[RMDB]
RNA sequence: GGGAACGACUCGAGUAGAGUCGAAAACAGCAUGAACGUGCCGCUCGGCGACGUGCGCGUCGAUCGCUUCAGCGGCAUCGGCUCCACCUUCGCGGAUCGGAAUUUCGGCAUCGGCAUGACGUGCACAGUCCUCACUACUCUUCGGAGUAGUGAGGACAAAAGAAACAACAACAACAAC
Reactivity to 2A3 in 0.01 (KOAc 150mM, MgCl2 10mM, bicine 150mM(pH8.5), 24C), signal-to-noise 2, nucleotides 027 to 126: c030a010g080c030a070u150g070a170a050c050g040u030g010c000c000g040c020u040c080g010g020c020g000a010c020g060u030g010c010g000c000g030u000c000g060a200u010c060g000c010u140u100c060a040g000c000g040g000c000a010u010c000g010g000c000u020c010c000a030c000c030u110u090c070g030c060g100g120a150u060c080g080g080a150a140u040u090u060c030g040g000c030a090u070c030g040g020c040a030u130g020a020c010g030u020g020c020a000c020a080
Reactivity to DMS in 0.01 (KOAc 150mM, MgCl2 10mM, bicine 150mM(pH8.5), 24C), signal-to-noise 1, nucleotides 027 to 126: c140a020g000c070a090u030g030a030a060c150g030u000g020c020c000g050c130u000c160g030g000c000g030a060c300g000u010g000c150g000c060g000u000c000g000a130u000c040g010c100u000u000c160a050g000c060g000g000c000a010u000c020g020g020c030u010c050c050a040c040c040u000u020c000g000c040g000g070a060u010c060g000g000a070a130u030u000u000c020g060g010c090a080u020c100g000g040c060a080u000g000a050c040g000u000g000c030a170c130a150